[RMDB]
RNA sequence: GGGAACGACUCGAGUAGAGUCGAAAAUAGACCUUGGUGGAGAUGUCUAGUGAGGUAGAGCGACCGAUUGGGUGGCCAGCAGUAGAAAUACUGCACCACUUUGUCAAACUCCGAACUUGCUAGAAUCCGUCGGCUAACAAUUCGUUGUUAGCCGACGAAAAGAAACAACAACAACAAC
Reactivity to DMS in 0.01 (KOAc 150mM, MgCl2 10mM, bicine 150mM(pH8.5), 24C), signal-to-noise 1, nucleotides 027 to 126: u030a000g000a130c020c000u000u000g010g000u050g000g000a080g000a040u000g030u000c000u000a000g000u000g010a000g000g030u030a130g000a030g000c000g050a150c300c260g040a010u020u050g000g010g020u000g000g000c120c170a140g000c030a000g000u000a000g000a010a030a050u000a040c010u000g040c000a250c000c000a020c000u000u020u070g000u000c000a150a230a240c000u000c000c000g000a080a300c000u000u000g000c000u000a000g000a060a000u000c000
Reactivity to 2A3 in 0.01 (KOAc 150mM, MgCl2 10mM, bicine 150mM(pH8.5), 24C), signal-to-noise 1, nucleotides 027 to 126: u180a040g140a050c000c000u000u060g080g080u120g000g120a140g010a050u110g060u150c000u000a000g000u010g000a000g020g000u100a040g010a010g010c100g040a060c070c030g000a020u020u000g060g000g010u000g000g000c020c160a020g000c000a000g000u030a000g010a030a000a030u000a000c000u000g010c000a000c000c010a000c000u030u000u000g040u000c000a010a060a120c000u000c000c030g060a140a040c000u000u000g000c000u000a000g020a000a010u000c010